This 177-nucleotide RNA was probed chemically with DMS and 2A3.
For 2A3, 1,024 sequencing reads were counted.
The RNA was probed in 150 mM KOAc, 10 mM MgCl2 and 150 mM bicine (pH 8.5) at 24 C.
Values cover nucleotides 27 to 126.
For 2A3 the reverse transcriptase was SuperScript II with manganese.
Reactivities are rounded to 0.1 and cut off at 0 and 3.
[RMDB]
RNA sequence: GGGAACGACUCGAGUAGAGUCGAAAAGUCGAACUUAUUUUGUCUCUACAGGAUAUGGGGCCAUCCUAGAGUGAACAUAUAUGAGGGUAUGAAAAAAGUCCAUGACUUAGGAACCAUAGAGAAGGAGGCAUAUUGUAGCCUUCGGGCUACAAUAUGCAAAAGAAACAACAACAACAAC
Reactivity to DMS in 0.01 (KOAc 150mM, MgCl2 10mM, bicine 150mM(pH8.5), 24C), signal-to-noise 1, nucleotides 027 to 126: g010u000c040g010a090a070c040u000u000a120u000u000u000u000g000u000c000u010c090u050a090c040a070g000g000a040u000a050u000g010g000g010g000c020c010a110u020c060c000u060a110g000a130g030u040g000a100a000c010a060u010a000u010a110u000g040a120g010g020g000u030a040u010g000a020a060a060a100a030a000g000u030c020c070a050u010g000a010c030u040u000a150g000g000a130a090c030c000a110u010a050g030a110g000a100a200g000g000a070g010
Reactivity to 2A3 in 0.01 (KOAc 150mM, MgCl2 10mM, bicine 150mM(pH8.5), 24C), signal-to-noise 3, nucleotides 027 to 126: g060u000c020g030a080a040c000u090u040a090u110u070u010u090g080u040c050u020c030u050a050c050a020g050g030a050u010a030u120g040g020g040g020c030c060a050u060c000c050u070a020g010a000g090u060g020a130a020c010a040u030a000u000a050u170g050a090g040g060g000u120a040u140g200a000a060a000a030a000a000g030u030c040c000a060u240g010a040c000u010u090a070g040g090a000a110c010c010a020u090a040g170a000g040a080a090g100g000a100g050